Conditions: 150 mM KOAc, 10 mM MgCl2 and 150 mM bicine (pH 8.5), 24 C. Chemical mapping of a 207-nucleotide RNA with 2A3. The data come from the RNA Mapping Database (RMDB), library VIROID.
[RMDB]
RNA sequence: GGGAACGACUCGAGUAGAGUCGAAAAUUCUUUCUCUUUCGUCGUCAUCCUUGGCUAGCCUCUGGAGUUCCUCUUCUUCCUCUUGGCUGAGGCGCUUUCCUCCUCCGGCCAGCUGCUUCUUCUUGUUCUCCAGGGCCUUCCUUCUUCUGUGCUCCUGCACUUGGAACAACUUCGGUUGUUCCAAGUGAAAAGAAACAACAACAACAAC
Reactivity to 2A3 in 0.01 (KOAc 150mM, MgCl2 10mM, bicine 150mM(pH8.5), 24C), signal-to-noise 1, nucleotides 027 to 156: u030u050c010u010u070u020c010u000c000u030u120u070c090g040u000c010g040u040c040a050u030c040c000u060u030g060g020c080u050a030g030c010c020u090c050u080g010g020a070g040u060u060c010c050u040c010u080u000c030u090u090c010c000u080c010u090u090g060g000c010u030g020a020g040g030c050g070c070u100u040u080c030c010u010c000c000u010c020c000g030g020c000c040a070g030c020u040g010c000u050u060c000u080u010c010u070u160g020u080u070c050u000c030c010a060g000g020g020c010c030u060u060c020c000u100u080c030u160u010c050u020g080u040g010c020u050c020c010u020g030